Record summary
Structure probing data (2A3 and DMS) for a 177-nucleotide construct. DMS (dimethyl sulfate) methylates the pairing face of unpaired adenines and cytosines. For 2A3 the reverse transcriptase was SuperScript II with manganese.
RNA sequence: GGGAACGACUCGAGUAGAGUCGAAAAAAAUUCAUUGUAACUUUGUUUUCUUCGUAUAAUAGGUGAGUUAUUAAGCCAUCCCAACUUAAUAACUUACAACAUUAGUAGGUGACCAAACAUUUACUAACAUCCAAUAUUAUUUCGAUAAUAUUGGAUGAAAAGAAACAACAACAACAAC
Reactivity to 2A3 in 0.01 (KOAc 150mM, MgCl2 10mM, bicine 150mM(pH8.5), 24C), signal-to-noise 4, nucleotides 027 to 126: a010a000a030u270u200c110a070u100u080g050u060a050a100c020u020u120u050g050u080u120u070u050c030u050u040c060g050u090a120u060a230a170u150a130g150g000u000g000a000g000u000u000a000u010u010a000a000g010c010c000a050u050c020c000c000a000a000c000u000u010a010a000u010a010a000c000u000u000a000c000a080a000c010a040u030u000a000g030u000a000g050g010u010g040a130c060c070a080a100a090c020a010u000u020u000a000c000u000a030a010
Reactivity to DMS in 0.01 (KOAc 150mM, MgCl2 10mM, bicine 150mM(pH8.5), 24C), signal-to-noise 4, nucleotides 027 to 126: a080a040a050u030u020c080a100u010u010g010u010a080a060c120u020u010u000g000u000u010u000u000c020u000u000c100g010u020a060u020a100a060u010a110g020g010u000g010a000g010u000u000a000u000u000a000a010g010c030c020a120u010c000c000c000a130a190c010u000u000a000a000u010a000a000c000u000u000a010c000a080a080c110a140u010u000a010g010u000a000g000g010u000g010a100c190c210a100a100a210c020a010u000u000u000a020c040u000a010a080